Chemical mapping of a 177-nucleotide RNA with 2A3 and DMS. Values cover nucleotides 27 to 126. The 2A3 profile rests on 501 reads. The data come from the RNA Mapping Database (RMDB), library OK1LIB. As a SHAPE reagent, 2A3 marks flexible, mostly unpaired nucleotides at the ribose 2'-OH. Conditions: 150 mM KOAc, 10 mM MgCl2 and 150 mM bicine (pH 8.5), 24 C.
[RMDB]
RNA sequence: GGGAACGACUCGAGUAGAGUCGAAAAUGGCCUGCGUACUGGCGCUCGGCAGUAUCAGCGACCGGAUGGAAAAAGGGUUAAGUCAGCAAAGCCGCGAGUUUAUGGCAGGCGAUCGGACGCUGCAAAGGCGUCGUGAUCCAUUCGUGGAUCACGACGCAAAAGAAACAACAACAACAAC
Reactivity to 2A3 in 0.01 (KOAc 150mM, MgCl2 10mM, bicine 150mM(pH8.5), 24C), signal-to-noise 1, nucleotides 027 to 126: u070g030g000c000c000u000g010c010g040u030a120c000u050g110g000c030g000c020u090c000g000g000c000a000g070u090a090u040c060a000g020c000g050a050c000c000g040g050a050u080g020g110a000a130a110a110a090g190g010g080u100u090a060a090g040u170c060a010g010c000a210a000a000g030c020c020g040c000g170a000g000u000u020u100a080u070g000g030c030a040g010g030c000g000a050u060c030g000g000a070c120g040c020u010g000c070a030a030a030g080
Reactivity to DMS in 0.01 (KOAc 150mM, MgCl2 10mM, bicine 150mM(pH8.5), 24C), signal-to-noise 1, nucleotides 027 to 126: u000g040g000c010c000u000g000c230g000u000a000c000u000g000g030c010g000c020u000c100g100g020c000a020g000u000a160u000c030a120g110c170g060a030c060c000g000g000a130u030g000g010a090a050a030a050a150g000g010g040u000u030a030a140g030u000c080a020g000c080a000a050a100g020c060c000g000c060g000a210g000u140u010u140a020u040g000g000c030a130g000g010c000g000a060u040c000g000g010a120c000g010c010u020g020c120a040a140a080g000